[RMDB]
RNA sequence: GGGAACGACUCGAGUAGAGUCGAAAAGCCGUAGCGCAUCGCAAAGACGCCGAGGUCACCCACGCAACCCACAUCGCACGCUUGGUCACUCGGGGUCCGUGCUAGCGGGCGGCGAACCGGACAUUGUUGAUUCUGGGGAGUUCGCUCCCCAGAAUCAAAAAGAAACAACAACAACAAC
Reactivity to 2A3 in 0.01 (KOAc 150mM, MgCl2 10mM, bicine 150mM(pH8.5), 24C), signal-to-noise 1, nucleotides 027 to 126: g010c000c000g020u000a010g130c010g000c070a080u000c020g000c030a040a140a020g000a000c030g080c070c010g020a000g010g100u200c090a020c000c000c010a000c030g050c010a010a190c010c040c020a040c000a290u180c100g000c000a000c000g000c040u030u040g030g000u070c020a000c120u010c010g020g020g000g030u030c000c000g090u100g000c000u000a000g010c000g010g010g020c000g000g000c000g000a000a010c000c000g040g050a090c110a210u060u080g060u130